[RMDB]
Annotation
Source: RMDB library TTRDEL, as collected in RNAgym. Chemical mapping of a 177-nucleotide RNA with DMS and 2A3. For 2A3 the reverse transcriptase was SuperScript II with manganese. The DMS profile rests on 664 reads.
RNA sequence: GGGAACGACUCGAGUAGAGUCGAAAAGAUAUGGACGUGGUAGCUAUAUACUACCCACCUCGGAAACGAGAGGUAUAACAAUGCUACCCACGUCCUAAGUCAAAAGUGGAUAGUUCGCUAUCCACAACAUCUCCAAGCGGUUCGCCGCUUGGAGAUGAAAAGAAACAACAACAACAAC
Reactivity to DMS in 0.01 (KOAc 150mM, MgCl2 10mM, bicine 150mM(pH8.5), 24C), signal-to-noise 1, nucleotides 027 to 126: g030a020u000a180u000g000g000a000c010g020u000g000g030u000a010g000c000u000a070u000a080u010a040c260u000a030c090c030c120a150c300c000u010c000g030g000a070a080a050c000g000a000g010a030g000g000u000a010u020a080a140c300a010a040u000g040c000u000a000c070c050c060a010c000g000u000c030c000u000a030a080g000u000c020a020a080a070a150g000u000g000g000a020u000a000g020u010u000c300g000c020u000a010u000c000c000a000c010a000a180
Reactivity to 2A3 in 0.01 (KOAc 150mM, MgCl2 10mM, bicine 150mM(pH8.5), 24C), signal-to-noise 1, nucleotides 027 to 126: g020a000u050a000u090g000g000a000c030g000u020g000g000u010a010g000c070u080a090u060a070u080a300c070u000a000c010c030c000a300c010c000u030c010g030g000a000a020a000c010g000a010g010a010g020g030u020a090u090a090a080c240a240a220u300g000c000u010a010c000c050c000a000c000g000u000c000c000u030a010a000g030u000c000a090a020a030a130g010u010g020g010a000u000a000g030u030u050c170g050c170u010a000u030c000c000a000c000a000a020
Annotation:
The reactions ran in a buffer of 150 mM KOAc, 10 mM MgCl2 and 150 mM bicine (pH 8.5), at 24 C. DMS adducts were read by reverse transcription with MarathonRT.